[RMDB]
Source: RMDB library M2RFPK, as collected in RNAgym. This 207-nucleotide RNA was probed chemically with 2A3 and DMS. 2A3 adducts were read by reverse transcription with SuperScript II with manganese. High 2A3 reactivity points to a flexible backbone, as in loops and unpaired stretches. For DMS, 2,138 sequencing reads were counted. The RNA was probed in 150 mM KOAc, 10 mM MgCl2 and 150 mM bicine (pH 8.5) at 24 C.
RNA sequence: GGGAACGACUCGAGUAGAGUCGAAAAUAACCCCUAUACUUGUAUAGGCGAGUAAUAAAUCUUCUGUAAAUGCUGUAAGAGGAUUACCCCUUGAGGUUUCAGCACUAGGCUGCUCUAGCGAUUAAUCACAACGAUUUGGUCUUCGGACCAAAUCGAACUCUAACUUUAUCUUCGGAUAAAGUUAGAGAAAAGAAACAACAACAACAAC
Reactivity to 2A3 in 0.01 (KOAc 150mM, MgCl2 10mM, bicine 150mM(pH8.5), 24C), signal-to-noise 3, nucleotides 027 to 156: u040a010a040c000c000c020c020u040a030u010a110c050u130u200g030u040a090u080a100g000g050c090g050a060g060u080a060a100u060a110a070a070u010c020u090u000c030u070g120u150a090a150a210u150g020c040u050g060u150a060a020g050a000g060g000a010u010u070a070c000c010c030c040u030u050g080a140g090g040u080u100u160c020a020g020c000a010c070u070a050g120g070c010u040g030c010u060c040u080a020g030c010g030a040u080u230a110a050u210c070a020c050a190a150c030g000a000u000u000u000g000g000u010c000u010u080c160g040g000a010c000c000a000a000a000u000c000g000a010a000
Reactivity to DMS in 0.01 (KOAc 150mM, MgCl2 10mM, bicine 150mM(pH8.5), 24C), signal-to-noise 1, nucleotides 027 to 156: u010a100a160c030c010c000c000u000a100u000a010c020u020u000g000u000a030u000a020g010g010c030g020a100g010u000a110a110u000a080a080a060u000c000u010u000c000u010g000u010a050a140a110u000g010c040u010g040u020a110a080g000a010g000g000a100u000u000a070c020c000c010c050u000u000g000a140g040g000u000u000u000c000a090g000c000a050c070u010a100g030g010c000u000g010c060u000c030u000a110g010c040g020a170u000u010a070a130u000c060a090c050a080a230c020g000a030u000u000u010g000g000u010c000u010u000c300g030g010a030c000c010a010a010a010u010c000g010a010a060